[RMDB]
RNA sequence: GGGAACGACUCGAGUAGAGUCGAAAAGAUAUGGAAAGAUUGACGAGACGUCAUUGUAAACCUGUCAUCGGAAACGAUGACAGGUUUACAAUGAAACGUCGAUGAGUCAAAUAGCUUUCCUAAGUCACUACCAGUAGUUCUUCGGAACUACUGGUAGAAAAGAAACAACAACAACAAC
Reactivity to DMS in 0.01 (KOAc 150mM, MgCl2 10mM, bicine 150mM(pH8.5), 24C), signal-to-noise 1, nucleotides 027 to 126: g010a060u000a300u010g000g010a010a000a000g000a110u000u000g000a010c020g010a190g020a000c010g010u020c000a010u010u000g010u020a000a000a000c000c000u000g000u000c000a010u010c000g040g010a100a100a200c020g020a020u000g010a000c000a000g010g010u000u000u000a000c000a020a000u000g000a140a080a020c040g020u000c000g000a070u010g020a300g000u000c000a000a030a140u040a120g000c010u010u000u020c010c000u010a040a160g010u000c030a200